RNA sequence: GGGAACGACUCGAGUAGAGUCGAAAAGAUCACGAGAUCCGGCUUCCAGUGAUCGAGAAAAUGAUCGACUGCCGGUUGCAGGUCGAGCGGUGCAUAUUGAUGAAUGACCCGCGAACCUAAUUGAUCAGUAUGCCUAUGGAUUCGUCCAUAGGCAUACAAAAGAAACAACAACAACAAC
Reactivity to DMS in 0.01 (KOAc 150mM, MgCl2 10mM, bicine 150mM(pH8.5), 24C), signal-to-noise 5, nucleotides 027 to 126: g000a010u000c010a010c130g010a200g000a110u010c010c000g030g010c050u000u010c030c080a200g010u010g010a010u000c000g010a130g000a080a070a110a070u000g000a050u000c000g010a080c080u000g000c000c000g010g000u010u010g030c120a040g010g010u000c060g010a290g010c000g010g010u000g010c010a010u000a270u010u010g010a210u000g000a090a010u000g010a060c040c000c000g020c000g000a080a040c010c010u000a070a100u010u000g000a020u000c020a130
Reactivity to 2A3 in 0.01 (KOAc 150mM, MgCl2 10mM, bicine 150mM(pH8.5), 24C), signal-to-noise 5, nucleotides 027 to 126: g000a000u000c010a010c070g130a080g010a150u060c000c000g010g000c030u150u010c060c030a020g040u030g060a020u010c020g010a040g120a070a190a010a070u210g000a010u010c050g070a050c060u050g000c010c010g010g000u020u070g020c090a030g010g050u200c070g050a030g010c020g000g050u170g000c040a020u070a070u160u290g220a160u130g080a180a040u060g060a150c000c000c000g000c010g010a020a010c000c010u050a060a110u090u080g010a010u050c020a000

Conditions: 150 mM KOAc, 10 mM MgCl2 and 150 mM bicine (pH 8.5), 24 C. Structure probing data (DMS and 2A3) for a 177-nucleotide construct. For DMS, 5,328 sequencing reads were counted. For 2A3, 4,126 sequencing reads were counted. Source: RMDB library OK2TST, as collected in RNAgym.